[RMDB]
RNA sequence: GGGAACGACUCGAGUAGAGUCGAAAAGAUAUGGACCUGAAUGACAUGUCUACUAUCGGAAACGAUAGAAUAGACAACAGCAUUUCAGGUCCUAAGUCAAACUGUACUACGUUCGCGUAGUACAGAACUAAUCUCCAAGCUUCGGCUUGGAGAUUAGAAAAGAAACAACAACAACAAC
Reactivity to 2A3 in 0.01 (KOAc 150mM, MgCl2 10mM, bicine 150mM(pH8.5), 24C), signal-to-noise 2, nucleotides 027 to 126: g020a010u030a010u080g000g030a000c020c000u000g000a000a000u000g050a070c170a300u300g000u000c000u010a030c000u000a010u000c010g010g000a020a010a000c010g000a000u000a010g010a090a140u060a040g040a010c030a120a090c120a160g000c000a040u090u170u280c020a000g000g000u000c000c000u010a010a000g000u000c010a010a060a140c000u000g000u000a010c000u020a020c020g020u030u080c300g000c030g190u020a000g010u000a000c000a010g000a030a000
Reactivity to DMS in 0.01 (KOAc 150mM, MgCl2 10mM, bicine 150mM(pH8.5), 24C), signal-to-noise 2, nucleotides 027 to 126: g010a000u000a030u020g000g000a000c000c000u000g000a040a040u000g000a050c070a250u020g020u000c000u000a010c000u010a000u000c000g010g000a040a010a050c000g020a000u000a000g020a130a130u000a020g020a010c000a080a090c250a260g000c000a010u010u000u010c010a000g010g040u010c010c000u000a010a080g000u000c030a150a100a280c010u000g000u000a010c000u000a000c000g000u000u040c180g060c010g000u000a000g010u000a000c000a000g010a020a140